[RMDB]
RNA sequence: GGGAACGACUCGAGUAGAGUCGAAAACAUGGCGGAAUGAAUGGUGGUGAUGAUUCCCGACGCGAUUCCAAAGGCAUCAUCAAUCCCUUUUAAUACCGGCACGAUGCAAUUGGUGGUGCAGGACGCGCUCGCGAAUAUCAUUCGUGAUAUUCGCGAGAAAAGAAACAACAACAACAAC
Reactivity to 2A3 in 0.01 (KOAc 150mM, MgCl2 10mM, bicine 150mM(pH8.5), 24C), signal-to-noise 2, nucleotides 027 to 126: c050a040u090g040g000c020g010g030a080a070u050g030a110a050u090g090g040u020g000g040u030g020a040u030g020a030u010u030c000c000c020g020a030c020g040c000g050a220u110u000c000c000a060a090a120g170g010c000a000u000c000a000u000c000a020a030u050c030c000c000u070u150u050u250a270a170u110a120c060c000g000g030c050a000c100g130a040u180g000c050a010a060u050u000g000g000u020g000g010u030g020c010a010g060g010a010c010g010c020g000
Reactivity to DMS in 0.01 (KOAc 150mM, MgCl2 10mM, bicine 150mM(pH8.5), 24C), signal-to-noise 3, nucleotides 027 to 126: c080a100u000g020g020c010g010g020a110a060u000g010a060a090u000g020g040u010g010g020u000g010a060u000g010a180u010u000c010c000c000g020a210c050g000c010g010a140u010u000c020c030a060a170a130g020g010c000a000u010c000a010u000c000a030a030u010c050c030c020u000u000u000u000a060a140u020a080c110c060g000g020c060a070c090g020a080u000g010c140a090a050u000u000g000g000u000g000g000u000g010c020a070g000g000a080c060g000c040g010
The record gives the reactivity of an RNA of 177 nucleotides to 2A3 and DMS. It was measured as part of the RMDB library OK2TST. The reactions ran in a buffer of 150 mM KOAc, 10 mM MgCl2 and 150 mM bicine (pH 8.5), at 24 C.